[RMDB]
The record gives the reactivity of an RNA of 177 nucleotides to DMS and 2A3. Conditions: 150 mM KOAc, 10 mM MgCl2 and 150 mM bicine (pH 8.5), 24 C.
RNA sequence: GGGAACGACUCGAGUAGAGUCGAAAAAAAAAGAUAUGGACCAGGAACUACUCGAAGGUGCGUGAUGACCCGUUCUCGGAAACGAGAACGGCAAGCGCACCGACGAGCCUGGUCCUAAGUCAAAAAAGAAUACGUCAUUGUUCGCAAUGACGUAUUCAAAAGAAACAACAACAACAAC
Reactivity to DMS in 0.01 (KOAc 150mM, MgCl2 10mM, bicine 150mM(pH8.5), 24C), signal-to-noise 2, nucleotides 027 to 126: a030a070a050a080a060g000a040u010a300u000g010g000a000c000c020a010g010g000a130a000c020u030a300c010u010c000g000a110a300g010g010u010g010c000g020u000g020a070u000g020a090c300c010c010g000u010u000c010u000c000g030g000a060a030a060c010g010a000g000a020a000c010g000g010c020a010a040g010c000g010c000a010c000c020g000a150c000g000a010g000c000c000u000g010g010u010c000c000u000a010a040g000u010c020a000a050a080a140a130a120
Reactivity to 2A3 in 0.01 (KOAc 150mM, MgCl2 10mM, bicine 150mM(pH8.5), 24C), signal-to-noise 1, nucleotides 027 to 126: a020a000a020a030a040g040a040u090a080u100g000g000a000c000c040a010g080g000a130a020c080u240a010c020u300c030g020a010a000g000g000u010g010c000g010u070g080a300u150g020a080c000c010c020g000u000u000c010u000c040g060g000a060a060a040c000g000a010g020a000a010c010g000g000c000a040a060g000c000g010c000a020c000c010g010a000c010g000a000g060c000c000u010g100g010u000c000c000u010a000a000g000u000c000a090a000a000a060a020a000